RNA sequence: GGGAACGACUCGAGUAGAGUCGAAAAACUGAGUUUGAAAUACCACAAAAGAAAAUGCUUGGCAACAAUGCUAUCUGUGAGAGUGGAGUGAAAAUCAAUUUAAAUUGUUCUAAAGAUUCUUACAAUGUCCAGGAAGAGAGUGGAACUACCAAAUAAAAGUAGUACUCAGUUUCGACUGAGUACUACUAAAAGAAACAACAACAACAAC
Reactivity to 2A3 in 0.01 (KOAc 150mM, MgCl2 10mM, bicine 150mM(pH8.5), 24C), signal-to-noise 2, nucleotides 027 to 156: a010c060u060g020a020g030u060u080u130g110a110a120a040u100a050c010c030a030c020a060a070a050a050g150a000a120a010a050u050g020c040u020u010g010g070c020a050a030c040a090a020u120g000c000u080a060u010c040u060g080u040g040a030g000a010g030u020g010g000a030g000u030g020a030a010a010a020u070c020a020a000u020u050u150a060a130a050u020u080g020u100u000c040u080a090a100a060g040a070u020u050c020u020u040a080c060a020a170u100g020u030c000c020a000g000g000a010a000g010a000g010a000g050u030g000g000a040a010c070u090a000c050c010a030a010a270u300a050a300a050
Reactivity to DMS in 0.01 (KOAc 150mM, MgCl2 10mM, bicine 150mM(pH8.5), 24C), signal-to-noise 1, nucleotides 027 to 156: a080c040u010g040a090g050u000u000u020g000a050a090a110u000a090c020c100a060c070a110a110a080a170g010a110a080a080a110u020g010c130u000u010g000g000c090a090a060c030a010a060u030g020c030u020a100u000c020u010g050u000g000a070g030a120g060u000g040g000a080g030u010g000a070a020a080a020u000c040a050a040u010u020u010a060a080a180u000u020g000u000u020c030u020a020a080a150g000a030u000u000c020u000u000a040c030a050a070u000g010u000c020c020a070g030g020a080a070g000a220g000a050g040u020g000g010a000a030c020u000a070c040c020a020a070a100u010a040a080a080
Chemical mapping of a 207-nucleotide RNA with 2A3 and DMS. For DMS the reverse transcriptase was MarathonRT. It was measured as part of the RMDB library OK3TST.